[RMDB]
Description:
An RNA of 177 nucleotides, treated with DMS and 2A3 and read out base by base.

RNA sequence: GGGAACGACUCGAGUAGAGUCGAAAAGUGACCAUGGGCAUUCUCUCGCUGCCAUCGAUGUUAAAGAGCGGAUAUCGACCGUCACUGGCCUGUGGCACACUCUGUGCGACUGGAACCCUGGGUCAGACACAUAUACUUCGUUCGCGAAGUAUAUGUGAAAAGAAACAACAACAACAAC
Reactivity to DMS in 0.01 (KOAc 150mM, MgCl2 10mM, bicine 150mM(pH8.5), 24C), signal-to-noise 9, nucleotides 027 to 126: g020u000g010a080c030c060a170u010g010g010g020c070a110u000u000c030u000c060u000c050g020c130u000g010c020c020a120u000c070g010a080u000g010u000u000a040a090a090g000a150g010c050g010g010a080u000a080u010c100g010a080c070c050g000u000c050a050c040u000g010g000c000c020u000g010u000g000g010c030a050c080a090c160u000c150u010g010u000g010c010g010a050c050u000g010g010a060a150c020c010c010u000g020g010g010u000c030a050g000a300
Reactivity to 2A3 in 0.01 (KOAc 150mM, MgCl2 10mM, bicine 150mM(pH8.5), 24C), signal-to-noise 9, nucleotides 027 to 126: g090u030g010a060c010c020a080u090g010g000g020c060a090u120u000c050u000c020u010c060g030c050u040g020c010c000a030u050c020g060a090u090g020u090u130a270a300a030g060a030g030c020g020g010a030u040a070u170c100g100a110c030c010g010u020c010a000c060u020g030g000c000c010u030g000u030g040g000c020a010c000a010c070u160c090u120g090u070g030c020g050a040c040u050g020g030a040a050c020c010c000u050g110g000g010u010c010a000g050a050